This 207-nucleotide RNA was probed chemically with 2A3 and DMS. Conditions: 150 mM KOAc, 10 mM MgCl2 and 150 mM bicine (pH 8.5), 24 C. 2A3 adducts were read by reverse transcription with SuperScript II with manganese. Reactivities are rounded to 0.1 and cut off at 0 and 3.
RNA sequence: GGGAACGACUCGAGUAGAGUCGAAAAUACCGUCUUCUCCCCGACGGUUUCAAUCCAUAGCUUCACGUUGUGUAGCGUAGGUGGAAGGUAUCGUGUGGUGUAUAAACAGCACAUAGUCUCUUAGGGGUCAAGCUGAUAAACUUCGGUUUAUCAGCAACCAACAGUAUAGUUUCGACUAUACUGUUGGAAAAGAAACAACAACAACAAC
Reactivity to 2A3 in 0.01 (KOAc 150mM, MgCl2 10mM, bicine 150mM(pH8.5), 24C), signal-to-noise 9, nucleotides 027 to 156: u070a010c000c000g010u010c020u160u040c050u090c000c000c000c000g000a000c000g010g000u010u020u050c040a030a040u020c010c010a050u050a120g010c010u050u060c020a030c080g300u300u260g020u090g030u070a020g010c030g070u090a070g040g110u030g010g020a030a030g080g020u100a060u180c080g000u020g000u010g080g150u010g080u020a090u080a220a270a030c020a010g070c000a010c010a020u050a060g030u010c010u000c010u110u180a030g000g000g010g010u050c060a060a030g000c000u000g000a000u000a000a000a000c000u030u040c130g080g000u000u000u000a000u000c000a000g000c000a000a010
Reactivity to DMS in 0.01 (KOAc 150mM, MgCl2 10mM, bicine 150mM(pH8.5), 24C), signal-to-noise 3, nucleotides 027 to 156: u000a030c010c000g000u000c010u000u000c040u000c020c000c010c080g030a050c030g020g020u000u000u000c040a090a090u010c010c030a110u000a210g010c010u030u010c040a050c030g020u000u010g030u000g010u000a050g030c040g030u000a060g010g030u000g000g010a060a070g010g010u010a070u000c070g030u000g010u000g010g020u000g030u000a170u020a120a090a090c050a060g000c010a020c020a060u000a100g010u000c040u000c030u010u010a170g020g010g000g010u000c030a050a190g030c000u000g010a020u000a000a000a020c010u000u000c300g050g030u000u000u000a000u010c000a010g030c010a010a030